[RMDB]
RNA sequence: GGGAACGACUCGAGUAGAGUCGAAAAACGAAAAGUCAGCUUACAAUAAUGUGCAAGUUGGGGAUGGGCCCCAACAUAGAGAAAUUGGGUCCGUAAUUUCUACAGACAAUGCAAGUUGGCGGGGCCCACCCCUAAUGCAGUUCGCUGCAUUAGGGGUAAAAGAAACAACAACAACAAC
Reactivity to 2A3 in 0.01 (KOAc 150mM, MgCl2 10mM, bicine 150mM(pH8.5), 24C), signal-to-noise 5, nucleotides 027 to 126: a000c080g040a020a020a000a000g080u040c010a000g010c010u050u100a030c030a080a070u260a240a110u260g050u050g170c100a090a090g010u030u030g020g020g000g030a130u110g050g110g130c000c000c000c000a000a000c000a000u010a000g150a000g010a000a010a010u060u050g080g030g030u050c050c020g000u030a020a060u030u030u020c020u060a100c010a030g040a040c040a100a000u080g050c000a040a040g060u030u000g030g000c000g040g010g020g000c000c000c000
Reactivity to DMS in 0.01 (KOAc 150mM, MgCl2 10mM, bicine 150mM(pH8.5), 24C), signal-to-noise 4, nucleotides 027 to 126: a120c080g000a040a060a050a080g020u020c040a030g000c020u020u000a100c050a060a080u050a080a110u020g020u000g010c070a030a030g010u020u000g000g000g000g000a220u020g000g000g020c000c000c000c000a030a220c090a060u020a050g000a080g010a020a030a030u000u000g010g010g010u020c050c040g010u010a030a050u010u010u020c060u000a020c090a060g000a050c040a050a060u010g000c090a070a070g000u000u000g000g030c260g000g000g000g000c000c010c010